[RMDB]
RNA sequence: GGGAACGACUCGAGUAGAGUCGAAAAAGGCCUCUGGAAUGUAUCGUCCUCCGGGACGUCUUAUAGCCAGGGGCGCAAUGCGGCCAGCCGGGACUGAGGAACGCGCUUCGGCACGGAUGCUGGCAUAUUUACAGGUGCAUUUCGAUGCACCUGUAAAAAAAGAAACAACAACAACAAC
Reactivity to 2A3 in 0.01 (KOAc 150mM, MgCl2 10mM, bicine 150mM(pH8.5), 24C), signal-to-noise 3, nucleotides 027 to 126: a020g040g000c010c000u000c000u010g000g070a120a130u100g010u050a080u090c000g020u020c000c000u030c080c120g060g000g000a000c010g010u020c000u030u110a060u040a040g030c000c000a000g000g000g000g030c000g000c000a020a050u090g030c000g060g000c000c010a000g000c000c000g040g000g060a130c010u060g020a040g020g020a180a060c100g090c040g000c090u020u010c010g030g000c010a010c040g060g010a150u120g030c010u020g000g050c010a020u080a060
Reactivity to DMS in 0.01 (KOAc 150mM, MgCl2 10mM, bicine 150mM(pH8.5), 24C), signal-to-noise 4, nucleotides 027 to 126: a140g000g020c000c000u010c000u000g000g000a110a020u060g010u000a020u010c000g000u000c010c000u000c250c220g020g020g000a010c000g030u020c060u000u010a030u020a080g000c000c010a020g000g000g010g000c000g010c120a040a040u000g000c100g000g000c020c010a050g000c020c040g020g000g000a220c020u020g020a070g010g010a160a140c230g010c250g000c010u020u000c020g000g000c160a100c030g020g000a150u030g030c000u010g000g010c000a030u020a010